Annotation:
The record gives the reactivity of an RNA of 207 nucleotides to 2A3 and DMS. 2A3 adducts were read by reverse transcription with SuperScript II with manganese. DMS adducts were read by reverse transcription with MarathonRT.

RNA sequence: GGGAACGACUCGAGUAGAGUCGAAAACUAGGGUUCGCCCUAGAGGACACCUUUGUGUUAUCACAGGUGAUGGAGACGAAACCAGCCCAUUGGGCUGGGUCCCGUCUAUGAAGUCACUCACAGUAACACUCUGGUCGAAUACAGCUUUCGAGCUGAAGCGUCAGUGUAAGUUCGCUUACACUGACGCAAAAGAAACAACAACAACAAC
Reactivity to 2A3 in 0.01 (KOAc 150mM, MgCl2 10mM, bicine 150mM(pH8.5), 24C), signal-to-noise 4, nucleotides 027 to 156: c000u010a000g050g010g050u110u080c260g230c000c000c000u020a020g040a080g050g080a020c010a020c040c000u010u010u010g010u000g000u020u010a100u160c020a050c060a090g000g010u000g010a000u000g020g060a010g000a010c000g000a090a010a070c000c000a000g000c000c010c020a190u150u300g010g000g000c000u000g010g010g000u060c030c000c000g000u000c000u000a300u040g030a010a010g000u010c020a010c000u090c010a030c010a070g010u000a000a010c000a010c000u000c000u000g040g000u040c030g040a030a050u200a170c010a010g000c000u130u140u290c270g100a010g000c000u040g050a120a020
Reactivity to DMS in 0.01 (KOAc 150mM, MgCl2 10mM, bicine 150mM(pH8.5), 24C), signal-to-noise 1, nucleotides 027 to 156: c000u000a030g000g010g000u010u020c270g000c010c000c040u000a020g010a120g030g030a250c050a010c000c000u010u010u010g070u020g010u000u000a010u000c040a210c180a080g000g030u000g000a020u020g000g030a040g020a060c030g010a010a000a000c010c010a030g020c000c000c000a300u000u010g030g060g000c010u000g010g030g000u000c040c000c000g080u010c000u010a250u000g010a180a300g040u000c000a050c020u010c010a150c230a180g030u000a030a010c000a030c000u010c040u000g010g010u000c050g000a210a060u020a130c000a040g000c000u000u000u030c140g000a070g050c000u000g000a080a130